[RMDB]
Source information: The record gives the reactivity of an RNA of 177 nucleotides to DMS and 2A3. Source: RMDB library OK1LIB, as collected in RNAgym. For DMS, 1,326 sequencing reads were counted.
RNA sequence: GGGAACGACUCGAGUAGAGUCGAAAAACGUUUCCAGUUGGUACAUAUCUUAUUAUAGCCUGCUCUAGUAUUGCUUGGAUAGCAAAUUUGAUGUUAAUAUGGUGCUACAGAACCCGGAAGCCCGCUGGAUUAGCGAUGCUUUCGAGCAUCGCUAAUCAAAAGAAACAACAACAACAAC
Reactivity to DMS in 0.01 (KOAc 150mM, MgCl2 10mM, bicine 150mM(pH8.5), 24C), signal-to-noise 1, nucleotides 027 to 126: a050c170g000u000u000u000c020c000a130g000u010u000g000g010u010a130c120a040u010a150u000c030u050u000a030u050u020a060u000a060g000c010c030u000g000c000u010c060u000a080g040u010a090u070u000g000c000u010u000g030g000a050u020a090g000c020a000a090a030u010u010u000g020a080u020g030u010u000a040a170u030a030u010g000g000u020g000c130u000a060c050a110g000a070a040c030c020c010g000g000a120a210g000c030c030c070g000c040u000g000
Reactivity to 2A3 in 0.01 (KOAc 150mM, MgCl2 10mM, bicine 150mM(pH8.5), 24C), signal-to-noise 2, nucleotides 027 to 126: a000c010g000u020u060u010c000c000a000g020u010u000g030g120u120a060c050a050u180a150u110c090u100u070a100u060u170a110u220a080g020c010c020u010g040c020u020c020u040a030g040u090a080u060u030g040c010u010u090g110g120a040u160a000g000c020a010a050a110u140u070u100g130a170u110g050u290u030a070a050u110a110u050g050g000u050g010c000u000a060c000a030g020a120a000c000c000c000g040g000a000a000g000c000c000c000g110c060u110g000